[RMDB]
RNA sequence: GGGAACGACUCGAGUAGAGUCGAAAAGAACAGUGAGCAAGUCGGCAAAGGGAAUCGUGGGGUUUGUUGCUAACCACACAGUACCGGGCACAGUAUCGGCCCCCACCUACAGCAAAAACAUCAGCCCCAUUGACUAAAAGUUCGCUUUUAGUCAAUGAAAAGAAACAACAACAACAAC
Reactivity to DMS in 0.01 (KOAc 150mM, MgCl2 10mM, bicine 150mM(pH8.5), 24C), signal-to-noise 8, nucleotides 027 to 126: g000a080a090c090a060g010u000g010a070g010c040a050a080g020u000c070g010g020c060a040a100a110g010g000g000a090a060u000c120g020u000g010g010g010g000u000u000u010g010u000u010g010c080u000a060a100c050c040a060c050a040c040a080g010u010a110c050c020g000g000g010c040a070c090a090g010u000a060u000c080g000g000c050c010c010c030c030a060c070c030u000a050c110a060g000c060a020a040a060a080a060c080a050u000c060a080g010c010c010c030
Reactivity to 2A3 in 0.01 (KOAc 150mM, MgCl2 10mM, bicine 150mM(pH8.5), 24C), signal-to-noise 4, nucleotides 027 to 126: g020a060a010c040a050g030u030g060a020g030c030a060a040g040u070c040g050g010c060a070a040a070g060g010g030a050a080u110c090g030u050g010g020g000g050u010u070u060g130u100u110g040c030u000a020a030c000c000a010c010a000c010a040g050u030a070c010c020g000g020g010c050a080c010a210g070u160a070u160c030g040g000c000c010c000c000c000a020c000c020u070a050c030a030g020c020a040a030a000a050a050c030a050u070c020a030g050c000c010c010